Chemical mapping of a 207-nucleotide RNA with 2A3 and DMS. For 2A3 the reverse transcriptase was SuperScript II with manganese. For DMS, 4,686 sequencing reads were counted. The 2A3 profile rests on 1,821 reads.
RNA sequence: GGGAACGACUCGAGUAGAGUCGAAAAGUUAUGCCCUGAGAUGAGGCGGGCUGCACGCGCACUACGAUAGAUGGCGCUUCUGCCUGCUGUGAGGGAUGAAGCUGUGUAAGGGGCUUCUGAACGUGGAAUUCCUAGUAAUAGCGGCUGACGAAGCUGCGUUACAGGGUAUCUUCGGAUACCCUGUAACAAAAGAAACAACAACAACAAC
Reactivity to 2A3 in 0.01 (KOAc 150mM, MgCl2 10mM, bicine 150mM(pH8.5), 24C), signal-to-noise 3, nucleotides 027 to 156: g090u100u090a140u230g050c000c000c020u040g070a130g040a120u090g030a030g080g000c000g000g020g000c010u050g010c100a100c080g010c000g050c000a060c060u190a050c170g080a070u160a110g080a090u110g100g000c020g000c000u020u040c030u020g000c010c000u000g000c030u030g000u050g060a080g000g000g000a010u030g020a010a020g010c020u030g000u010g030u300a060a050g050g030g000g000c000u050u020c010u020g050a050a030c020g030u120g070g050a020a030u050u000c000c000u030a050g000u080a050a070u010a100g030c000g000g020c000u000g000a060c090g030a060a000g010c010u030g000c020
Reactivity to DMS in 0.01 (KOAc 150mM, MgCl2 10mM, bicine 150mM(pH8.5), 24C), signal-to-noise 2, nucleotides 027 to 156: g020u020u000a090u010g000c020c000c010u010g030a160g000a140u010g020a140g010g020c030g020g020g010c000u010g000c240a050c010g010c020g040c020a130c030u000a120c110g020a220u000a090g020a120u000g000g000c000g000c000u000u030c030u010g040c000c000u000g010c010u000g000u010g020a100g000g000g000a180u000g010a050a110g030c000u000g020u000g040u000a110a150g030g010g010g010c020u030u010c030u000g020a130a110c100g030u010g030g010a140a100u010u010c010c020u000a110g020u020a060a100u010a140g030c010g030g010c010u010g010a210c130g000a120a090g000c010u000g010c040